RNA sequence: GGGAACGACUCGAGUAGAGUCGAAAAGACGGCAGUUCGGAACUAUAAGGACAACGAACAGAUCCCAAGUUGUCCUAAUAACUGGACUGAGUACAGUUAGUUGUUUAGCAUACUCUUGGGAUCUGUUGUAUGCUAUAUAGUUCUAACUGUACUGUCAUCGUCCGUAUGAUUUCGAUCAUACGGACGAAAAAGAAACAACAACAACAAC
Reactivity to 2A3 in 0.01 (KOAc 150mM, MgCl2 10mM, bicine 150mM(pH8.5), 24C), signal-to-noise 3, nucleotides 027 to 156: g000a010c010g000g030c000a000g030u040u160c130g040g010a000a000c010u020a010u050a150a070g140g050a140c020a080a050c150g080a010a010c020a010g000a000u000c010c000c000a000a000g050u090u050g000u020c020c010u000a000a000u020a000a000c000u060g100g030a010c000u010g030a050g300u170a230c010a030g000u000u000a000g000u010u030g060u050u020u060a000g010c030a080u050a300c030u000c000u050u000g000g000g010a010u020c030u010g000u000u000g010u010a060u060g030c000u010a010u000a000u000a250g010u000u000c000u010a000a000c000u000g000u040a290c030u090g010u000c010a010
Structure probing data (2A3) for a 207-nucleotide construct.
Source: RMDB library OK3TST, as collected in RNAgym.
For 2A3, 1,611 sequencing reads were counted.
Reactivities are given for positions 27 through 156.